[RMDB]
RNA sequence: GGGAACGACUCGAGUAGAGUCGAAAAGAUAUGGAACGAAUCUAUGAACUACGAAUCAGUGAUCGGAAACGAUCACGAUUCGCAUAGACUAUUCCUAAGUCAAAACCGAAAAGUUCGCUUUUCGGAAGAUAACUCACUUCUUCGGAAGUGAGUUAUCAAAAGAAACAACAACAACAAC
Reactivity to DMS in 0.01 (KOAc 150mM, MgCl2 10mM, bicine 150mM(pH8.5), 24C), signal-to-noise 4, nucleotides 027 to 126: g010a040u000a300u000g000g020a000a030c110g020a080a140u000c020u020a000u000g020a090a090c180u010a300c010g000a000a000u000c000a150g030u000g010a010u010c010g010g000a090a100a190c000g020a010u000c000a000c010g000a010u000u000c000g010c000a010u000a010g020a020c050u000a300u000u000c000c000u010a030a230g010u000c040a090a040a110a150c000c000g000a000a000a010a010g010u000u010c260g000c020u000u000u000u000c000g000g000a040a070
Reactivity to 2A3 in 0.01 (KOAc 150mM, MgCl2 10mM, bicine 150mM(pH8.5), 24C), signal-to-noise 3, nucleotides 027 to 126: g010a020u070a040u160g010g020a020a030c070g060a170a300u000c000u000a000u010g030a100a150c130u220a070c300g000a000a000u020c060a190g010u010g000a000u000c000g000g070a110a030a030c020g020a000u000c000a000c000g000a000u000u000c000g000c010a000u000a000g000a000c020u030a020u040u000c000c000u010a080a000g010u030c040a000a000a130a180c010c000g010a000a000a010a010g050u070u220c300g060c150u020u010u010u010c000g010g010a000a010